[RMDB]
RNA sequence: GGGAACGACUCGAGUAGAGUCGAAAAGAUAUGGAUGUGAAGCAUCGAUCGUGACGGUCGGAAACGACCGCACGGGAGCCACAUCCUAAGUCAAACAACGUGUGUCCGUUCGCGGACACACGUUGAAGCAACGAGUUAAGUUCGCUUAACUCGUUGCAAAAGAAACAACAACAACAAC
Reactivity to DMS in 0.01 (KOAc 150mM, MgCl2 10mM, bicine 150mM(pH8.5), 24C), signal-to-noise 1, nucleotides 027 to 126: g010a010u000a300u010g000g010a000u000g040u010g010a130a090g040c030a130u010c050g000a090u000c010g040u020g030a100c000g000g000u000c010g020g020a040a100a290c000g010a010c000c000g010c000a010c010g020g000g000a050g000c020c000a020c010a000u000c000c010u000a000a060g000u010c030a090a180a300c000a000a000c000g010u000g030u000g000u000c000c010g020u000u000c190g020c000g010g000a000c010a020c000a000c000g010u000u000g000a070a220
Reactivity to 2A3 in 0.01 (KOAc 150mM, MgCl2 10mM, bicine 150mM(pH8.5), 24C), signal-to-noise 2, nucleotides 027 to 126: g020a000u070a010u120g000g020a000u010g030u050g100a200a040g080c040a300u300c040g120a150u150c020g050u000g190a300c020g010g000u010c010g010g000a050a050a060c020g000a000c000c020g020c040a000c000g000g030g010a000g030c030c010a000c000a000u050c010c020u000a060a020g040u030c030a040a040a180c010a010a000c000g040u000g000u010g000u010c010c060g000u110u160c300g040c040g110g000a000c000a030c020a000c000g010u000u000g000a010a000